Structure probing data (2A3) for a 207-nucleotide construct.
Values cover nucleotides 27 to 156.
Conditions: 150 mM KOAc, 10 mM MgCl2 and 150 mM bicine (pH 8.5), 24 C.
RNA sequence: GGGAACGACUCGAGUAGAGUCGAAAACCGUAGGUCCUGAAACAGCUUGGAUUUAUGUGGCGGGAGUAUGGUUCGAAAGAGCCAUACAGCCACAUUGUCAGCUGGAGUAUGGGACCUAAACGGAAAACGAAUAAUUGUCUUCGGACAAUUAUUCGAACGUACUACCUCGGUUCGCCGAGGUAGUACGAAAAGAAACAACAACAACAAC
Reactivity to 2A3 in 0.01 (KOAc 150mM, MgCl2 10mM, bicine 150mM(pH8.5), 24C), signal-to-noise 2, nucleotides 027 to 156: c010c000g010u000a050g010g000u000c000c000u010g010a030a010a030c000a010g010c040u150u220g280g010a120u300u300u070a000u050g010u020g000g000c020g050g090g030a180g030u010a000u000g030g000u000u000c000g060a120a080a060g000a030g020c000c000a000u000a010c000a000g010c000c000a000c000a000u000u000g000u030c000a000g000c000u000g010g000a000g000u010a020u280g000g000g000a010c000c000u000a010a010a000c010g000g070a050a030a010a120c020g000a000a000u010a000a000u000u010g000u000c010u030u040c280g050g000a000c010a000a000u000u000a000u000u000c000g000a000a010

The 2A3 profile rests on 2,055 reads.